[RMDB]
RNA sequence: GGGAACGACUCGAGUAGAGUCGAAAAUCUGCGCAGCUGCAAAGUAGGACGCGCCGUUACGGUAGCGUGCCCUGAACUCUUCACGUGUCAUAUCCGAGAAGGGUGUCACACCAAACGUUGCGUAUGGGGCGCAUACCGAGUUCGCUCGGUAUGCGCCAAAAGAAACAACAACAACAAC
Reactivity to DMS in 0.01 (KOAc 150mM, MgCl2 10mM, bicine 150mM(pH8.5), 24C), signal-to-noise 1, nucleotides 027 to 126: u000c000u000g000c020g020c030a010g010c010u010g030c060a050a050a130g080u000a230g030g020a040c020g060c000g030c000c010g020u050u000a040c220g010g020u000a070g000c020g000u000g000c010c000c150u000g000a190a060c060u000c000u000u000c030a090c000g000u000g000u000c260a110u010a220u000c140c000g000a120g020a050a020g000g000g000u000g000u000c130a160c100a020c080c090a070a080a020c220g000u000u040g010c000g060u000a020u000g000g020
Reactivity to 2A3 in 0.01 (KOAc 150mM, MgCl2 10mM, bicine 150mM(pH8.5), 24C), signal-to-noise 1, nucleotides 027 to 126: u010c010u040g030c010g040c000a000g000c040u100g000c070a100a020a000g030u050a050g000g020a000c000g040c030g030c000c000g120u200u190a100c220g010g020u010a040g000c000g010u080g160c020c000c000u090g000a030a000c010u020c000u060u000c000a020c020g080u100g030u030c070a180u050a070u110c030c020g020a000g040a080a020g000g040g030u040g060u000c040a000c000a010c050c060a090a100a000c080g000u000u000g000c000g000u040a140u180g050g000